[RMDB]
RNA sequence: GGGAACGACUCGAGUAGAGUCGAAAACUGUCCUGUGUGGAAGUACGUGAGUACUUCACGCUCUACGGGAGUAGAGCCACACAGAACGUGGAGCGUUGUCUUGGAACUACUCCCGUAGUUCACGUAUGACUCACGUCAUACCAAGACGACAGCCACGCGAGGGUAAUACGUUCGCGUAUUACCCUCGAAAAGAAACAACAACAACAAC
Reactivity to DMS in 0.01 (KOAc 150mM, MgCl2 10mM, bicine 150mM(pH8.5), 24C), signal-to-noise 1, nucleotides 027 to 156: c010u000g010u000c000c030u000g030u000g030u000g000g000a110a150g080u010a000c000g090u020g010a130g030u000a040c060u000u010c060a130c050g050c070u000c020u000a000c000g040g000g000a270g030u000a040g000a180g030c010c020a010c050a010c000a050g000a030a060c010g000u010g020g000a230g030c090g020u000u000g000u000c010u030u000g010g010a040a100c040u000a010c040u000c120c100c120g030u000a020g000u000u000c060a100c060g000u000a060u000g000a070c000u000c080a170c240g000u000c040a130u000a030c050c030a050a040g010a060c000g020a000c020a040g000c020c010a070c050g030
Reactivity to 2A3 in 0.01 (KOAc 150mM, MgCl2 10mM, bicine 150mM(pH8.5), 24C), signal-to-noise 3, nucleotides 027 to 156: c020u010g030u000c000c000u010g010u000g000u010g000g020a040a050g010u110a010c010g010u030g030a020g020u070a250c030u070u120c030a040c050g060c020u000c000u010a000c000g050g000g000a030g000u000a000g000a020g020c000c000a000c000a000c010a000g030a010a000c010g020u130g130g100a110g190c030g000u010u010g010u000c000u000u010g020g000a040a090c000u000a000c010u030c020c110c050g010u000a000g000u020u070c080a080c110g070u070a040u130g030a010c000u010c050a010c040g000u000c000a000u030a030c000c010a000a000g000a000c000g000a000c000a000g040c000c010a050c050g050